[RMDB]
RNA sequence: GGGAACGACUCGAGUAGAGUCGAAAAAUUCCUGUACCACCUCUUCAUCGUUUGAGCAAUGGGGGGACGCAGGAGGAUAGGGUAAGCGCACUAUUGGACAUGUGCGUCUAAGCAGUUAGGCUGGGAACUGGAUCUCUAUGUUCGCAUAGAGAUCCAGAAAAGAAACAACAACAACAAC
Reactivity to DMS in 0.01 (KOAc 150mM, MgCl2 10mM, bicine 150mM(pH8.5), 24C), signal-to-noise 3, nucleotides 027 to 126: a180u020u000c010c000u000g020u010a110c060c120a240c060c010u010c010u000u000c070a060u000c070g010u000u020u010g010a170g020c070a100a060u010g000g000g010g000g010g030a050c220g010c050a030g020g000a040g010g010a130u000a100g000g000g010u010a070a120g000c030g010c010a010c010u010a240u000u010g010g010a110c160a090u020g000u010g010c020g000u010c050u000a060a070g010c070a110g000u010u010a090g020g020c080u010g010g000g010a090a180
Reactivity to 2A3 in 0.01 (KOAc 150mM, MgCl2 10mM, bicine 150mM(pH8.5), 24C), signal-to-noise 2, nucleotides 027 to 126: a010u090u000c020c000u030g000u030a040c030c030a090c070c000u030c050u160u060c020a130u040c050g100u040u140u300g180a150g080c060a110a000u090g000g000g000g000g000g000a010c060g010c010a000g000g040a030g010g010a090u210a060g080g020g000u020a010a070g040c010g000c010a000c010u060a040u220u220g130g010a050c060a130u070g010u000g040c000g010u020c000u020a040a000g010c000a020g070u100u150a060g060g000c010u030g020g000g070a030a040
The record gives the reactivity of an RNA of 177 nucleotides to DMS and 2A3.
Conditions: 150 mM KOAc, 10 mM MgCl2 and 150 mM bicine (pH 8.5), 24 C.
DMS adducts were read by reverse transcription with MarathonRT.